The record gives the reactivity of an RNA of 207 nucleotides to 2A3.
Conditions: 150 mM KOAc, 10 mM MgCl2 and 150 mM bicine (pH 8.5), 24 C.
Reactivities are rounded to 0.1 and cut off at 0 and 3.
[RMDB]
RNA sequence: GGGAACGACUCGAGUAGAGUCGAAAAAAUUAUCCGAACGCGCCGUGGUACUGAAUCCCAUGCACGCACAGCAGUCGCAUGCAUUGAUGAGAUUGAUAACUAUGCCGUCGGAAUUCGCAUUUUGGGCAUUUCAGGGACCGUCCGAGCCUGUGAGGAACGUACACCUCACAUUCGUGUGAGGUGUACGAAAAGAAACAACAACAACAAC
Reactivity to 2A3 in 0.01 (KOAc 150mM, MgCl2 10mM, bicine 150mM(pH8.5), 24C), signal-to-noise 2, nucleotides 027 to 156: a010a040u260u140a080u010c020c010g000a120a000c020g020c000g000c040c030g000u000g020g000u010a040c020u000g020a030a020u040c000c000c000a000u010g020c040a000c050g030c010a020c070a080g100c030a040g060u100c150g030c010a010u060g030c010a070u050u130g060a090u090g080a140g010a070u100u120g020a050u100a150a020c070u090a050u080g030c000c000g000u040c030g000g080a020a080u080u090c090g030c090a110u080u050u070u060g070g030g090c080a120u000u000u050c100a090g050g010g100a090c000c010g020u040c000c010g010a050g030c000c000u000g010u040g070a090g030g030a010a010